[RMDB]
RNA sequence: GGGAACGACUCGAGUAGAGUCGAAAACAUAAGGGGGCUGCGUGGCCUAUUGUUAGACGACGUAUAGUGCAAAUGUUGUCAGACACUUUAGACAAAUUGUCUGAUUACUGUACGUUUGUUUGUUGGGGGGCUAGGGACUUCGGUCCCUAGAAAAGAAACAACAACAACAAC
Reactivity to 2A3 in 0.01 (KOAc 150mM, MgCl2 10mM, bicine 150mM(pH8.5), 24C), signal-to-noise 5, nucleotides 027 to 129: c040a050u160a110a090g110g010g010g000g000c000u090g030c100g130u210g040g000c000c000u140a130u050u100g170u080u130a060g020a030c030g000a010c000g020u000a000u020a010g010u040g030c060a080a120a100u300g050u170u130g010u020c040a000g010a000c000a000c020u050u140u070a110g040a170c090a030a100a030u020u010g030u030c000u010g000a020u040u110a010c000u020g000u000a000c000g000u020u040u180g020u010u030u020g060u080u070g010g000g000g010g010g000
Reactivity to DMS in 0.01 (KOAc 150mM, MgCl2 10mM, bicine 150mM(pH8.5), 24C), signal-to-noise 4, nucleotides 027 to 129: c100a110u010a100a000g050g040g020g020g040c080u000g020c170g060u000g010g010c070c020u030a080u000u000g050u070u010a100g020a050c070g010a040c030g010u010a030u020a020g040u020g000c300a100a120a110u100g030u100u070g000u020c030a000g010a030c020a020c190u030u000u040a030g070a140c220a040a000a070u050u000g010u030c000u000g030a040u010u060a050c010u010g030u000a000c030g030u000u000u000g010u020u000u020g030u000u040g050g020g010g020g020g020